[RMDB]
RNA sequence: GGGAACGACUCGAGUAGAGUCGAAAAAGGGCGCAUACUACGGUAUGCGCGCAAUCAGAAAUCGGGAAUGAUGUUCUCCCCUGGGAUUCCAAAACCGCUGUUUCGCUGAUGACGUCUGCUUUUUUAAUCACCACCGUUUGGUUCGCCAAACGGUGAACACUCCGGUAAUCUUCGGAUUACCGGAGUGAAAAGAAACAACAACAACAAC
Reactivity to 2A3 in 0.01 (KOAc 150mM, MgCl2 10mM, bicine 150mM(pH8.5), 24C), signal-to-noise 1, nucleotides 027 to 156: a010g100g020g000c000g010c000a010u000a000c010u020a000c190g080g000u000a010u000g020c000g000c000g050c010a000a060u130c050a010g130a030a160a110u090c080g000g000g000a050a080u050g020a080u090g120u120u000c120u080c030c000c030c030u030g010g030g100a130u120u110c060c050a010a010a000a030c050c040g000c100u080g070u060u090u040c060g000c020u090g010a030u010g000a010c040g060u000c040u050g090c040u100u040u060u010u020u100a130a080u050c040a010c050c010a000c000c000g000u000u000u000g040g000u000u020c070g020c060c010a000a010a000c000g000g010u000g000a000a000
Source: RMDB library M2RFPK, as collected in RNAgym. The record gives the reactivity of an RNA of 207 nucleotides to 2A3. The reactions ran in a buffer of 150 mM KOAc, 10 mM MgCl2 and 150 mM bicine (pH 8.5), at 24 C. For 2A3 the reverse transcriptase was SuperScript II with manganese.